[RMDB]
RNA sequence: GGGAACGACUCGAGUAGAGUCGAAAAGAGCGUCGAGAGACGAAGAGAAGUGCACCGAUCAGCAAUGGGGAACGUAAUGGUGCACAAGAGUAAGUCAGUGUAACGUUCUCCGGGCACUGGAGGCAGACCACCGGUACGUGUUCGCACGUACCGGUGGAAAAGAAACAACAACAACAAC
Reactivity to DMS in 0.01 (KOAc 150mM, MgCl2 10mM, bicine 150mM(pH8.5), 24C), signal-to-noise 1, nucleotides 027 to 126: g010a020g000c000g020u000c010g000a230g000a250g000a060c020g000a090a130g030a090g030a160a120g000u000g000c030a050c000c000g000a010u200c090a130g010c120a060a000u000g000g000g000g000a080a000c000g050u000a120a080u000g020g080u010g010c020a070c050a080a100g000a220g000u000a010a120g000u040c190a130g050u040g000u010a110a130c000g000u000u010c000u000c000c010g000g000g000c010a060c000u000g000g000a030g020g000c000a000g000a170
Reactivity to 2A3 in 0.01 (KOAc 150mM, MgCl2 10mM, bicine 150mM(pH8.5), 24C), signal-to-noise 2, nucleotides 027 to 126: g010a000g040c040g030u000c000g040a050g000a000g010a050c060g010a060a000g150a000g030a300a000g040u030g000c060a040c030c040g010a200u130c070a040g050c020a100a110u130g110g010g000g000a010a000c000g010u030a110a120u150g020g000u040g030c000a000c000a000a010g080a000g110u170a210a000g070u050c120a000g000u070g080u050a010a000c000g010u000u000c000u000c000c000g010g000g030c060a020c020u000g040g000a040g020g000c040a030g060a070
The record gives the reactivity of an RNA of 177 nucleotides to DMS and 2A3. For DMS, 1,086 sequencing reads were counted. DMS adducts were read by reverse transcription with MarathonRT. For 2A3, 780 sequencing reads were counted. It was measured as part of the RMDB library OK1LIB. The reactions ran in a buffer of 150 mM KOAc, 10 mM MgCl2 and 150 mM bicine (pH 8.5), at 24 C.